[RMDB]
Record summary:
The record gives the reactivity of an RNA of 177 nucleotides to DMS and 2A3. The RNA was probed in 150 mM KOAc, 10 mM MgCl2 and 150 mM bicine (pH 8.5) at 24 C. The 2A3 profile rests on 1,907 reads. Reactivities are rounded to 0.1 and cut off at 0 and 3. It was measured as part of the RMDB library OK2TRN. For DMS the reverse transcriptase was MarathonRT. For 2A3 the reverse transcriptase was SuperScript II with manganese.

RNA sequence: GGGAACGACUCGAGUAGAGUCGAAAACGCGGUUCGGGGCCGGUCGGCACUGGAGCCGCGCAGACCGCGCGGCUUUUCGGGCGGGAAUCGAUGCGCCGGCCCGCAGGGCGUGGCAUGCCUACUUCCGGCCAUGAGAAUAUUUCGAUAUUCUCAUGGCAAAAGAAACAACAACAACAAC
Reactivity to DMS in 0.01 (KOAc 150mM, MgCl2 10mM, bicine 150mM(pH8.5), 24C), signal-to-noise 2, nucleotides 027 to 126: c040g000c030g030g020u000u000c040g030g010g020g000c000c040g010g000u000c070g040g040c000a070c070u010g010g000a030g000c020c040g000c030g030c020a020g000a120c300c160g000c010g010c010g030g010c040u010u000u010u000c070g030g020g010c050g010g030g010a110a090u000c070g020a130u010g010c040g000c010c010g010g010c020c000c000g000c080a050g000g000g020c000g020u000g000g020c060a110u000g010c000c020u010a130c110u020u000c020c070g010
Reactivity to 2A3 in 0.01 (KOAc 150mM, MgCl2 10mM, bicine 150mM(pH8.5), 24C), signal-to-noise 2, nucleotides 027 to 126: c030g010c040g050g030u100u070c000g010g030g020g020c020c020g020g050u110c030g210g040c050a030c120u080g040g040a000g040c020c000g050c000g060c020a000g070a130c050c020g000c000g000c050g000g010c050u060u010u070u140c070g040g010g000c060g010g070g050a030a070u080c060g060a100u110g000c060g040c000c000g010g020c000c000c030g010c000a020g000g040g000c020g030u030g050g020c050a020u090g010c000c010u030a090c040u100u020c060c020g050